[RMDB]
RNA sequence: GGGAACGACUCGAGUAGAGUCGAAAACAGUACGGGCGGGAGAUCGGCGUUGGGCUAGGGUUUUGUGUGGUUCCGUGGUGUCGCGUGGAAGGCGCGUGCGAGCCGAGAGUGAGUGGGAGCGCGAAUGCGCUGAAGGUGGAUUCGUCCACCUUCAGCGAAAAGAAACAACAACAACAAC
Reactivity to DMS in 0.01 (KOAc 150mM, MgCl2 10mM, bicine 150mM(pH8.5), 24C), signal-to-noise 6, nucleotides 027 to 126: c140a140g010u020a070c070g000g010g010c110g000g000g010a070g000a060u010c050g000g010c050g010u010u010g010g010g020c110u010a070g010g010g010u000u000u020u010g020u020g010u010g010g010u000u010c030c050g020u000g000g020u010g010u010c040g010c050g030u010g010g010a100a100g000g000c030g010c050g020u010g010c050g010a160g010c030c040g000a050g000a090g020u010g010a100g020u010g000g000g000a100g000c030g000c040g000a060a070u030g010
Reactivity to 2A3 in 0.01 (KOAc 150mM, MgCl2 10mM, bicine 150mM(pH8.5), 24C), signal-to-noise 9, nucleotides 027 to 126: c040a000g120u180a030c040g010g100g080c120g030g020g000a060g010a070u080c020g050g020c060g080u110u080g020g010g040c070u070a080g020g030g010u050u040u110u080g110u020g020u040g010g050u080u000c040c020g020u050g040g030u060g010u040c010g000c030g030u040g050g060a130a070g070g000c020g000c010g020u070g010c030g020a020g000c000c020g020a040g000a010g020u090g010a040g010u080g000g020g010a040g010c030g000c010g050a080a050u140g030

Chemical mapping of a 177-nucleotide RNA with DMS and 2A3. For 2A3 the reverse transcriptase was SuperScript II with manganese. Source: RMDB libraries RFM100 and RFMREP, as collected in RNAgym.